[RMDB]
RNA sequence: GGGAACGACUCGAGUAGAGUCGAAAACUUCGGGCGCCGGCGCGGGCGCGCCUUGCUGCGGGUGGAUGAAGCCUUCGAGCACGAUUUCCGCGCGCGCCGGCACCUGCAGCGCGUCGACGCCGGGCGAUACCCCGAUAUGAUUCGUCAUAUCGGGGUAAAAAGAAACAACAACAACAAC
Reactivity to DMS in 0.01 (KOAc 150mM, MgCl2 10mM, bicine 150mM(pH8.5), 24C), signal-to-noise 2, nucleotides 027 to 126: c030u000u000c030g000g010g010c000g040c000c020g010g010c020g030c040g000g020g040c030g040c170g010c290c040u010u010g010c020u000g020c140g000g000g020u000g010g020a180u010g000a150a270g000c000c010u010u010c090g000a050g000c010a030c060g010a130u000u010u010c160c010g010c000g000c010g020c000g000c030c040g010g000c010a000c010c020u000g000c040a020g000c040g000c060g030u000c030g000a060c050g010c050c010g000g020g000c040g010a230
Reactivity to 2A3 in 0.01 (KOAc 150mM, MgCl2 10mM, bicine 150mM(pH8.5), 24C), signal-to-noise 1, nucleotides 027 to 126: c000u050u070c030g010g040g000c090g000c040c020g030g010c000g000c020g060g100g050c000g000c020g060c000c050u020u110g000c020u040g050c010g030g060g030u070g050g060a210u200g190a110a050g030c030c000u120u250c130g100a050g000c010a010c100g070a090u040u160u140c060c020g060c030g040c010g000c000g000c040c020g000g000c000a000c000c010u000g000c030a010g000c010g040c040g060u030c030g060a080c050g010c010c000g020g030g000c020g050a030